[RMDB]
RNA sequence: GGGAACGACUCGAGUAGAGUCGAAAAUGAUGCUGUUGCGAUUGAUGCAGUAUUGGCGGCAGAUGCGCUAAUGAAAGAACUCGGACUGGAUGGGGAGUGAGACUUGAAUGAGUGGACCGCCUGAAGGGCUUCCUGAUUGGAUUACCGUUAGGUAGAGUGCUCAUUCGAUAUUCGUAUCGAAUGAGCAAAAAGAAACAACAACAACAAC
Reactivity to DMS in 0.01 (KOAc 150mM, MgCl2 10mM, bicine 150mM(pH8.5), 24C), signal-to-noise 1, nucleotides 027 to 156: u000g030a100u000g000c010u000g000u000u010g010c010g000a200u000u010g010a120u000g070c040a090g020u000a100u000u050g000g020c050g040g130c040a070g020a070u000g020c060g030c080u040a060a080u000g020a050a070a170g000a020a070c020u000c020g000g000a140c020u000g000g000a090u000g010g000g010g010a100g020u000g030a090g010a060c020u000u000g000a110a110u000g030a070g040u000g030g000a100c080c040g020c030c030u000g000a080a050g020g020g000c070u000u000c020c000u000g020a220u000u000g030g000a100u000u000a050c020c030g000u000u000a020g000g020u010a070g010a170g010
Reactivity to 2A3 in 0.01 (KOAc 150mM, MgCl2 10mM, bicine 150mM(pH8.5), 24C), signal-to-noise 2, nucleotides 027 to 156: u090g040a020u060g000c010u030g010u070u050g070c090g060a100u030u210g070a070u130g000c010a010g040u080a090u100u130g040g000c010g000g000c070a020g050a130u120g050c020g000c050u040a010a150u140g070a010a020a100g040a040a060c010u010c090g070g070a010c040u010g010g010a030u030g010g010g030g000a040g010u040g010a020g010a000c000u040u060g030a050a030u120g000a030g010u070g000g030a000c000c030g020c000c010u050g010a050a050g000g000g000c000u030u020c010c010u070g080a120u040u220g030g000a020u010u160a090c000c020g010u050u060a040g010g010u000a020g010a040g090